[RMDB]
RNA sequence: GGGAACGACUCGAGUAGAGUCGAAAAGAUCGUGUCGAUCAUCAGGCGCGCGUCGCGAUGGCCGCACAAGUCGAUGACGCGCAGCGCCGCGGCGAUCGUCGGAACGCCUGUCCACGGUGUGGGCUCGGAGGGACUAUGCUUUCGAGCAUAGUCCCUCAAAAGAAACAACAACAACAAC
Reactivity to DMS in 0.01 (KOAc 150mM, MgCl2 10mM, bicine 150mM(pH8.5), 24C), signal-to-noise 1, nucleotides 027 to 126: g020a010u010c040g020u010g040u030c020g010a060u000c080a030u000c030a220g010g020c010g000c010g010c050g000u000c030g020c010g000a020u000g000g030c090c100g010c100a030c150a050a170g010u000c010g020a090u000g010a030c020g000c020g000c050a050g030c090g020c010c050g010c040g000g010c060g030a000u000c030g000u000c030g000g030a110a060c030g030c030c010u000g010u000c020c000a040c000g000g000u000g000u000g000g000g010c000u000c040g020
Reactivity to 2A3 in 0.01 (KOAc 150mM, MgCl2 10mM, bicine 150mM(pH8.5), 24C), signal-to-noise 1, nucleotides 027 to 126: g040a040u020c050g030u040g130u230c030g040a030u000c000a000u030c000a040g010g010c010g000c010g020c000g030u010c000g000c030g030a050u090g100g000c090c000g000c070a040c090a170a000g000u030c010g070a260u110g020a010c010g000c020g030c060a070g040c010g000c000c020g000c150g030g000c030g000a010u000c000g020u010c020g030g010a020a110c040g000c010c010u020g030u000c000c030a060c090g230g090u280g000u070g050g060g000c040u080c080g190